[RMDB]
RNA sequence: GGGAACGACUCGAGUAGAGUCGAAAACGAGAAAGUUCGCUUUCUCGAAAAAAGAUAUGGAUCGAUGUACGUGGAGCUGACAUUCGGAAACGAAUGUAACAGCGAUGAAACGUACCGCUCGAUCCUAAGUCAAAAAACUACAGAUUCGUCUGUAGAAGAAUCGCCCUAGAUUCGUCUAGGGCGAUUCAAAAGAAACAACAACAACAAC
Reactivity to 2A3 in 0.01 (KOAc 150mM, MgCl2 10mM, bicine 150mM(pH8.5), 24C), signal-to-noise 2, nucleotides 027 to 156: c000g010a000g030a000a020a000g020u090u110c230g020c140u000u010u000c000u010c000g090a100a000a000a000a010a020g040a040u060a030u090g010g000a000u010c010g000a010u280g010u000a000c010g000u020g010g020a000g000c010u010g050a100c000a010u000u000c000g010g030a040a040a050c020g010a000a010u010g040u080a140a130c010a000g000c000g030a170u010g000a010a010a000c000g010u000a000c000c000g000c000u010c000g000a000u000c000c000u010a060a010g020u010c050a040a040a000a100a080a000c000u020a010c000a000g030a050u020u130c120g080u020c110u010g000u020a000g020a020a020
Structure probing data (2A3) for a 207-nucleotide construct. Values cover nucleotides 27 to 156. The 2A3 profile rests on 1,363 reads. The reactions ran in a buffer of 150 mM KOAc, 10 mM MgCl2 and 150 mM bicine (pH 8.5), at 24 C.